[RMDB]
RNA sequence: GGGAACGACUCGAGUAGAGUCGAAAAGAUAUGGACGCUUACAGACAUGCCUCGCAAUCGGAAACGAUUGGGAGGCAACAGCUGUGGCGUCCUAAGUCAAAGCCCACGACGUUCGCGUCGUGGGCAACAUACAUAUAAACUUCGGUUUAUAUGUAUGAAAAGAAACAACAACAACAAC
Reactivity to 2A3 in 0.01 (KOAc 150mM, MgCl2 10mM, bicine 150mM(pH8.5), 24C), signal-to-noise 4, nucleotides 027 to 126: g000a010u010a010u040g000g000a000c000g030c070u300u300a010c250a010g020a030c090a270u300g030c020c000u040c040g300c120a000a000u000c010g020g010a000a010a010c030g000a000u010u020g060g140g000a000g000g040c020a020a000c010a000g000c000u000g000u010g000g000c000g000u010c000c000u010a000a000g000u010c010a050a120a070g010c000c000c000a000c010g000a000c000g040u090u200c300g020c000g120u000c000g000u000g000g000g030c010a010a010
Reactivity to DMS in 0.01 (KOAc 150mM, MgCl2 10mM, bicine 150mM(pH8.5), 24C), signal-to-noise 2, nucleotides 027 to 126: g010a010u000a030u010g000g010a010c010g010c000u000u030a010c000a010g010a020c090a300u020g010c000c000u000c000g000c000a010a000u010c000g020g010a020a010a040c000g010a010u010u000g000g000g010a020g010g010c000a000a010c130a130g000c000u010g010u000g000g010c000g000u000c000c000u000a000a050g000u000c010a120a130a160g010c000c000c000a020c000g010a010c000g040u000u020c260g010c000g020u000c000g000u000g010g010g020c000a000a020

Structure probing data (2A3 and DMS) for a 177-nucleotide construct. The RNA was probed in 150 mM KOAc, 10 mM MgCl2 and 150 mM bicine (pH 8.5) at 24 C. For DMS, 7,677 sequencing reads were counted. The 2A3 profile rests on 9,859 reads. Reactivities are given for positions 27 through 126. The data come from the RNA Mapping Database (RMDB), library TTRDES.